[RMDB]
RNA sequence: GGGAACGACUCGAGUAGAGUCGAAAACAACAUAAACUUACCGAUGGACCAGAAGACAAAUCCUAGUAGUAAAGAGAUCGGUAUGCCAGUUGACGCGGCCAUUAUCCUCAGGUCUAAUGUAGAGUCAGAUUAUUGGAGUCUUCGGACUCCAAUAAUCAAAAGAAACAACAACAACAAC
Reactivity to DMS in 0.01 (KOAc 150mM, MgCl2 10mM, bicine 150mM(pH8.5), 24C), signal-to-noise 2, nucleotides 027 to 126: c060a070a140c150a080u010a020a050a150c040u000u000a040c030c050g010a070u000g010g020a070c100c060a080g000a140a100g000a080c040a040a040a100u000c000c040u010a070g020u000a100g020u000a080a100a130g020a210g010a040u000c040g030g000u000a000u000g010c020c050a080g020u000u000g000a050c060g000c090g020g020c090c030a080u000u000a060u000c050c010u000c030a080g020g010u010c040u010a070a040u000g020u020a070g010a100g010u020c050a070
Reactivity to 2A3 in 0.01 (KOAc 150mM, MgCl2 10mM, bicine 150mM(pH8.5), 24C), signal-to-noise 2, nucleotides 027 to 126: c020a020a010c010a080u200a070a130a040c000u040u030a000c030c010g050a060u020g000g000a010c000c040a070g070a180a000g130a100c030a050a140a000u130c030c040u060a100g040u040a010g010u070a130a150a000g080a000g010a030u030c010g000g020u040a030u030g050c040c040a010g020u050u050g070a040c030g000c020g030g040c000c000a010u080u070a020u080c010c040u000c030a010g090g000u000c000u060a090a080u120g110u140a080g010a010g120u020c070a010
An RNA of 177 nucleotides, treated with DMS and 2A3 and read out base by base. DMS adducts were read by reverse transcription with MarathonRT. For DMS, 1,333 sequencing reads were counted. Values cover nucleotides 27 to 126. The RNA was probed in 150 mM KOAc, 10 mM MgCl2 and 150 mM bicine (pH 8.5) at 24 C. 2A3 adducts were read by reverse transcription with SuperScript II with manganese.